[RMDB]
The record gives the reactivity of an RNA of 177 nucleotides to DMS and 2A3. For 2A3, 3,624 sequencing reads were counted. It was measured as part of the RMDB library OK2TST. The DMS profile rests on 2,856 reads. 2A3 adducts were read by reverse transcription with SuperScript II with manganese. The reactions ran in a buffer of 150 mM KOAc, 10 mM MgCl2 and 150 mM bicine (pH 8.5), at 24 C.
RNA sequence: GGGAACGACUCGAGUAGAGUCGAAAAUGCCACGCACCACAUCCACGGAGGAAAACACCACGUCGGAUUGUCAGACAAGUUUGAAUCAUCCGCCUCCCAAAAUGACCUUUACGGAUAUGCUAAACACACCCUAAUUACGUUUCGACGUAAUUAGGGUAAAAGAAACAACAACAACAAC
Reactivity to DMS in 0.01 (KOAc 150mM, MgCl2 10mM, bicine 150mM(pH8.5), 24C), signal-to-noise 4, nucleotides 027 to 126: u010g010c030c040a100c100g030c030a060c050c040a090c050a070u000c030c020a100c110g000g020a150g000g000a080a090a090a110c130a050c070c050a040c090g010u010c060g010g000a070u000u000g010u010c070a070g020a080c080a070a130g020u000u000u000g010a100a060u000c080a030u000c010c020g000c030c040u010c010c030c040a040a050a050a070u010g010a110c050c020u000u000u000a110c090g010g010a070u000a050u010g000c110u010a040a060a100c130a080c190
Reactivity to 2A3 in 0.01 (KOAc 150mM, MgCl2 10mM, bicine 150mM(pH8.5), 24C), signal-to-noise 3, nucleotides 027 to 126: u050g030c000c000a010c040g010c000a020c010c000a050c000a020u000c020c000a010c080g040g000a100g030g010a030a150a030a030c040a030c030c010a050c020g060u050c000g030g000a030u020u100g050u040c000a000g010a110c040a140a100g000u000u060u070g090a070a070u050c000a010u000c040c000g010c030c020u020c000c000c030a000a080a010a080u120g060a070c010c010u070u120u100a060c040g040g000a010u020a010u110g060c040u080a060a060a000c090a020c000